[RMDB]
RNA sequence: GGGAACGACUCGAGUAGAGUCGAAAAUUGGCAUUGUGGUGCGUCGUGGGAGAGCGUGCCGCAUGGGGAAGCCGUGUACGAGGACGUACACCUUGUUUUGGUGGGGGAGAGUGUCACGUCCCGCUUUCGGGAGUGUCAUCAUGAGCGACACUGGUUGGACUUAUAAUGUCUUCGGACAUUAUAAGUCAAAAGAAACAACAACAACAAC
Reactivity to 2A3 in 0.01 (KOAc 150mM, MgCl2 10mM, bicine 150mM(pH8.5), 24C), signal-to-noise 9, nucleotides 027 to 156: u100u070g050g010c060a030u030u070g010u030g020g000u030g020c030g020u030c030g020u080g020g050g010a040g010a000g020c020g000u020g020c010c010g000c020a020u020g000g000g000g040a060a030g030c050c040g030u020g000u020a030c030g010a100g060g160a060c040g010u030a010c010a040c020c020u130u170g100u120u160u110u130g070g010u100g030g010g000g020g000a050g000a010g020u040g030u030c030a010c060g190u060c000c000c000g020c070u100u160u200c030g010g000g000a020g010u020g020u010c020a050u030c010a040u150g080a020g060c060g030a020c010a010c070u030g050g000u020u050g040
Reactivity to DMS in 0.01 (KOAc 150mM, MgCl2 10mM, bicine 150mM(pH8.5), 24C), signal-to-noise 2, nucleotides 027 to 156: u000u000g020g010c050a130u010u010g050u010g020g030u000g000c040g020u000c070g000u000g020g000g000a200g020a240g000c010g050u000g000c020c030g000c030a030u000g000g020g020g030a110a120g030c070c030g030u000g040u000a040c000g020a130g040g020a190c030g020u000a040c040a060c030c020u000u000g010u000u010u000u000g020g010u000g010g000g010g000g000a060g000a090g020u000g010u000c040a100c060g010u010c000c000c000g020c270u000u000u000c060g010g010g010a260g020u000g000u000c030a140u000c120a150u010g000a120g010c030g000a050c020a010c000u000g020g000u010u000g020